RNA sequence: GGGAACGACUCGAGUAGAGUCGAAAAUAAUCUGACUGGCUAUGAGGUCAGACCUCAUACGCAUCUCAUAUCAUACCAGUCAUGGGGUGCCGAGACUUGGGUUUAUACACAAACUCAGAAUUGUGUGGAUACAAUACUAUUUCGAUAGUGUUGUAUCAAAAGAAACAACAACAACAAC
Reactivity to 2A3 in 0.01 (KOAc 150mM, MgCl2 10mM, bicine 150mM(pH8.5), 24C), signal-to-noise 9, nucleotides 027 to 126: u070a000a050u030c030u020g030a030c010u030g050g030c050u050a030u090g050a030g010g040u030c030a010g050a080c000c000u030c010a030u030a080c040g000c010a040u000c010u000c010a020u030a040u120c030a020u040a140c030c020a040g070u090c060a040u030g000g000g000g020u010g000c020c020g050a040g020a060c040u070u060g020g000g000u010u010u010a090u070a010c080a000c010a030a040a010c020u040c060a020g090a070a110u070u040g040u020g020u050g110
Reactivity to DMS in 0.01 (KOAc 150mM, MgCl2 10mM, bicine 150mM(pH8.5), 24C), signal-to-noise 9, nucleotides 027 to 126: u040a070a100u010c050u010g000a030c050u010g000g010c100u000a020u020g000a050g000g000u010c160a090g010a300c050c010u000c040a050u010a060c230g010c070a040u000c010u000c020a040u020a090u020c070a060u020a100c100c080a070g010u010c060a040u010g010g000g000g010u010g010c030c070g010a070g010a110c110u010u010g000g000g000u000u000u000a080u030a100c140a060c110a010a010a050c020u010c080a080g010a060a090u000u010g000u010g000u010g010